[RMDB]
This 177-nucleotide RNA was probed chemically with 2A3 and DMS. The RNA was probed in 150 mM KOAc, 10 mM MgCl2 and 150 mM bicine (pH 8.5) at 24 C. The data come from the RNA Mapping Database (RMDB), library TTRDEL. The DMS profile rests on 787 reads.
RNA sequence: GGGAACGACUCGAGUAGAGUCGAAAAGAUAUGGAAAUACAAAAGUCUAUUUCAGCGUUGAAAUCGGAAACGAUGGAGCUGAAUAGUCGCUGUAUUUCCUAAGUCAAAACCGAAGUUCGCUUCGGAACAUCUAACUUUUCUUCGGAAAAGUUAGAUGAAAAGAAACAACAACAACAAC
Reactivity to 2A3 in 0.01 (KOAc 150mM, MgCl2 10mM, bicine 150mM(pH8.5), 24C), signal-to-noise 2, nucleotides 027 to 126: g000a000u070a060u180g000g010a020a000a010u010a000c000a010a300a160a160g010u000c000u000a000u080u300u080c000a010g000c020g300u300u070g070a080a060a020u020c020g050g000a140a100a030c030g000a010u010g020g010a030g020c000u000g000a000a000u000a010g000u000c000g000c130u010g000u010a000u000u000u000c000c010u000a080a020g050u010c000a050a030a110a280c010c000g010a020a000g030u070u300c300g050c230u050u010c000g000g000a040a040
Reactivity to DMS in 0.01 (KOAc 150mM, MgCl2 10mM, bicine 150mM(pH8.5), 24C), signal-to-noise 1, nucleotides 027 to 126: g000a020u010a300u040g040g000a020a000a010u000a010c020a020a270a300a300g000u020c000u000a000u010u000u000c000a000g000c000g000u000u000g000a080a120a010u010c010g030g010a110a070a150c030g020a010u000g000g000a070g000c020u000g000a020a010u000a000g020u000c000g010c200u000g060u000a010u000u000u000c010c010u000a000a030g000u010c050a040a090a150a080c000c000g010a020a010g010u000u040c240g000c000u010u000c000g000g000a130a100